[RMDB]
An RNA of 177 nucleotides, treated with DMS and read out base by base. The RNA was probed in 150 mM KOAc, 10 mM MgCl2 and 150 mM bicine (pH 8.5) at 24 C. Reactivities are rounded to 0.1 and cut off at 0 and 3. DMS adducts were read by reverse transcription with MarathonRT. For DMS, 845 sequencing reads were counted.
RNA sequence: GGGAACGACUCGAGUAGAGUCGAAAACACAACUGCGAAGGGGGGACGGAGAACGCUAUGUUGGCCGGGCGACGGUUGUCCCGGUUUAAGCGUGUAGGCUGGUUUUCCAGGCAAAUCCGGAAUUGAAGAUAGAUCACUCCUUCGGGAGUGAUCUAUCAAAAGAAACAACAACAACAAC
Reactivity to DMS in 0.01 (KOAc 150mM, MgCl2 10mM, bicine 150mM(pH8.5), 24C), signal-to-noise 1, nucleotides 027 to 126: c070a110c110a030a100c080u000g030c040g030a090a060g020g020g010g020g010g000a020c010g000g000a030g000a080a000c010g010c000u000a060u020g030u000u020g020g010c020c000g000g010g010c300g030a110c180g000g010u040u010g000u010c040c000c000g000g010u000u000u000a040a060g000c000g000u010g000u010a180g000g010c000u020g020g000u000u010u010u000c000c010a090g000g010c030a040a060a160u000c000c020g030g020a040a080u010u010g000a170a090